[RMDB]
RNA sequence: GGGAACGACUCGAGUAGAGUCGAAAAGAUAUGGAUCCCACCAAGCUGAUGACCUCGGAAACGAGCAAGGCUGGUGUGGAUCCUAAGUCAAAAGGAGGAUUGGAAGCUUCGGCUUCCAAUCCUCCAAGUAUACGAUGGCGUUCGCGCCAUCGUAUACAAAAGAAACAACAACAACAAC
Reactivity to DMS in 0.01 (KOAc 150mM, MgCl2 10mM, bicine 150mM(pH8.5), 24C), signal-to-noise 1, nucleotides 027 to 126: g010a050u000a300u000g000g000a000u000c000c000c000a000c000c010a040a150g010c000u000g010a060u010g010a040c300c000u000c000g000g000a150a110a170c040g000a030g000c080a100a160g000g010c000u000g000g000u000g000u010g040g000a000u010c000c000u000a040a110g000u000c010a090a080a120a060g010g010a010g020g000a010u000u000g000g010a000a000g000c000u000u020c260g040g000c000u010u020c000c010a000a000u000c000c000u000c000c000a000a040
Structure probing data (DMS) for a 177-nucleotide construct. The reactions ran in a buffer of 150 mM KOAc, 10 mM MgCl2 and 150 mM bicine (pH 8.5), at 24 C.